[RMDB]
RNA sequence: GGGAACGACUCGAGUAGAGUCGAAAAGAGCGCGCAGGAGCCCUAGAGGCCACCCCGUGGGCCGUGGCCCCCGCACGGCUGUCCCGGCUGUCCCGGCUGUCCCGGCUGCAGCCACUUCCUGCUUAGCCCUCCAUUAUAUAUUCGUAUAUAAUGGAGGAAAAGAAACAACAACAACAAC
Reactivity to 2A3 in 0.01 (KOAc 150mM, MgCl2 10mM, bicine 150mM(pH8.5), 24C), signal-to-noise 4, nucleotides 027 to 126: g030a020g020c050g000c010g000c050a030g010g030a020g010c020c010c020u090a100g100a230g150g000c020c010a040c020c060c020c030g060u150g020g010g000c010c020g010u030g030g040c000c010c010c000c000g000c000a010c010g040g000c020u030g060u020c010c010c020g020g000c010u020g020u070c040c000c000g040g000c040u100g070u140c000c010c020g020g010c040u070g000c010a010g010c000c000a020c010u070u030c010c020u030g060c040u090u110a060g020c000
Reactivity to DMS in 0.01 (KOAc 150mM, MgCl2 10mM, bicine 150mM(pH8.5), 24C), signal-to-noise 9, nucleotides 027 to 126: g000a090g020c030g020c100g010c020a060g010g010a300g010c010c020c070u000a140g000a150g010g010c020c020a060c060c070c160c070g020u010g010g010g010c020c020g010u000g000g010c030c010c010c020c030g010c040a020c040g010g000c010u000g000u000c050c040c020g010g010c020u000g010u000c300c030c020g010g010c120u010g000u010c060c010c020g010g010c080u000g020c030a030g000c020c020a110c140u000u000c020c020u000g010c050u010u000a170g010c170
An RNA of 177 nucleotides, treated with 2A3 and DMS and read out base by base.
Source: RMDB library OK2TRN, as collected in RNAgym.
The 2A3 profile rests on 9,528 reads.